[RMDB]
RNA sequence: GGGAACGACUCGAGUAGAGUCGAAAACUAUAACGGUCCUAAGGUAGCGAAAUUCCUUGUCGGGUAAGUUCCGACCUGCACGAAUCGUGAAACGAGUUGGGCACUGUCUCAACCAGGCGCUCAGUGAAUUAACUUUCCCGUUCGCGGGAAAGUUAAUAAAAGAAACAACAACAACAAC
Reactivity to DMS in 0.01 (KOAc 150mM, MgCl2 10mM, bicine 150mM(pH8.5), 24C), signal-to-noise 2, nucleotides 027 to 126: c030u010a120u060a070a160c120g000g010u000c010c020u010a050a040g010g000u000a080g000c040g000a050a040a100u010u030c010c000u010u000g000u020c050g000g040g010u010a080a080g010u040u010c030c000g010a020c050c030u020g000c070a010c030g020a060a020u010c030g000u000g000a200a120a140c180g000a090g000u020u000g000g010g000c000a150c120u040g000u030c040u040c050a110a060c150c010a030g000g010c100g000c030u000c010a040g010u010g020a090
Reactivity to 2A3 in 0.01 (KOAc 150mM, MgCl2 10mM, bicine 150mM(pH8.5), 24C), signal-to-noise 3, nucleotides 027 to 126: c020u030a020u050a300a070c060g030g020u030c000c040u090a070a040g110g000u020a020g050c010g040a050a080a110u090u030c000c000u030u040g040u040c060g000g010g030u090a190a040g040u100u050c010c000g030a020c000c020u070g010c070a030c100g060a060a040u140c040g030u040g090a070a090a050c100g040a070g090u020u000g010g000g010c030a050c160u070g040u050c050u040c070a030a090c040c000a000g000g030c050g010c040u030c010a040g010u000g100a010